[RMDB]
RNA sequence: GGGAACGACUCGAGUAGAGUCGAAAAGAUAUGGAGAUCCCACGACAUGAUGAGUUUCGGAAACGAAAUGGCAUCAACAGCGUGAGGAUCUCCUAAGUCAAAGGUAUUCGUGUUCGCACGAAUACCAGAACUCCUAAACGUUCGCGUUUAGGAGUUCAAAAGAAACAACAACAACAAC
Reactivity to 2A3 in 0.01 (KOAc 150mM, MgCl2 10mM, bicine 150mM(pH8.5), 24C), signal-to-noise 3, nucleotides 027 to 126: g010a010u030a020u040g010g000a000g000a010u000c020c010c000a000c000g040a050c060a220u290g000a000u010g000a000g020u000u000u020c010g000g010a030a020a020c010g000a020a020a010u180g300g300c010a000u040c010a100a170c240a230g110c000g010u020g020a300g010g000a010u000c000u000c010c000u010a000a000g000u000c040a100a040a110g000g000u000a010u000u000c000g000u000g030u050u110c300g020c120a000c000g000a000a000u000a000c000c020a000
Reactivity to DMS in 0.01 (KOAc 150mM, MgCl2 10mM, bicine 150mM(pH8.5), 24C), signal-to-noise 3, nucleotides 027 to 126: g010a010u000a210u010g000g000a000g010a010u010c000c000c000a010c010g010a070c130a170u000g020a020u000g010a300g020u000u000u000c000g000g010a070a080a110c000g020a000a010a020u010g010g050c030a000u000c010a030a060c300a120g000c000g010u000g010a150g020g010a000u000c000u000c000c000u000a000a030g000u000c020a100a090a090g010g010u000a000u010u000c000g010u000g010u000u020c290g010c010a000c000g000a000a010u000a000c000c000a050
Conditions: 150 mM KOAc, 10 mM MgCl2 and 150 mM bicine (pH 8.5), 24 C. An RNA of 177 nucleotides, treated with 2A3 and DMS and read out base by base. 2A3 adducts were read by reverse transcription with SuperScript II with manganese. Values cover nucleotides 27 to 126.